Chemical mapping of a 177-nucleotide RNA with 2A3 and DMS. 2A3 adducts were read by reverse transcription with SuperScript II with manganese. Source: RMDB library OK2TRN, as collected in RNAgym. The RNA was probed in 150 mM KOAc, 10 mM MgCl2 and 150 mM bicine (pH 8.5) at 24 C. The DMS profile rests on 24,574 reads.
RNA sequence: GGGAACGACUCGAGUAGAGUCGAAAACAUUGUGCCGGGACGGCCGCUGCAGCGCUGAGGUCGGCCAGUGUACGCGACCGCCAACUCAGCCGGUAAGCCCUGGCGGCGGUGGAGCAGUCGUCGAAGCAGUAGGUUAACUAUUCGUAGUUAACCUACUAAAAGAAACAACAACAACAAC
Reactivity to 2A3 in 0.01 (KOAc 150mM, MgCl2 10mM, bicine 150mM(pH8.5), 24C), signal-to-noise 9, nucleotides 027 to 126: c030a060u100u200g090u130g080c020c010g030g100g050a020c010g010g010c000c010g000c010u160g020c010a100g070c010g000c030u050g070a070g070g170u100c040g040g010c000c010a030g030u050g060u120a060c080g000c010g050a040c010c010g020c030c010a090a120c090u100c140a040g030c040c020g010g020u050a110a050g020c000c010c020u030g040g000c010g010g000c020g070g100u020g000g030a020g000c000a000g010u020c000g000u010c020g010a030a000g000c010
Reactivity to DMS in 0.01 (KOAc 150mM, MgCl2 10mM, bicine 150mM(pH8.5), 24C), signal-to-noise 9, nucleotides 027 to 126: c050a110u010u000g010u000g020c010c010g000g000g000a040c030g020g010c010c020g020c020u000g010c060a070g010c060g010c020u000g000a120g010g010u000c050g010g010c020c040a050g020u010g010u010a090c180g010c030g000a030c020c040g000c070c040a090a130c120u010c110a090g010c140c020g010g010u000a080a130g020c050c060c020u000g000g020c020g010g010c010g010g010u000g000g000a050g020c030a040g010u000c010g020u000c020g010a210a120g000c060